[RMDB]
RNA sequence: GGGAACGACUCGAGUAGAGUCGAAAAGAUAUGGAGGUGGAGGCUCGCAUGAGAGGACCUAUAAGUUUCGGAAACGAAACUUAUAGGUCUACCCACCUCAUGAACUACGAGUGAAGCCUCCUAAGUCGUUACCUGGUUAGUUCGCUAACCAGGUAACAAAAGAAACAACAACAACAAC
Reactivity to DMS in 0.01 (KOAc 150mM, MgCl2 10mM, bicine 150mM(pH8.5), 24C), signal-to-noise 1, nucleotides 027 to 126: g020a030u000a300u000g000g000a070g000g030u020g030g030a250g080g030c020u000c000g000c050a080u000g020a030g000a110g070g000a030c000c020u000a000u000a040a020g020u020u020u020c000g050g020a070a050a300c080g000a030a000a000c000u000u000a000u000a000g000g030u000c020u020a000c030c030c100a300c130c020u020c000a030u000g000a000a180c080u000a300c050g050a020g050u000g000a300a300g000c000c000u000c000c000u020a020a100g000u000c100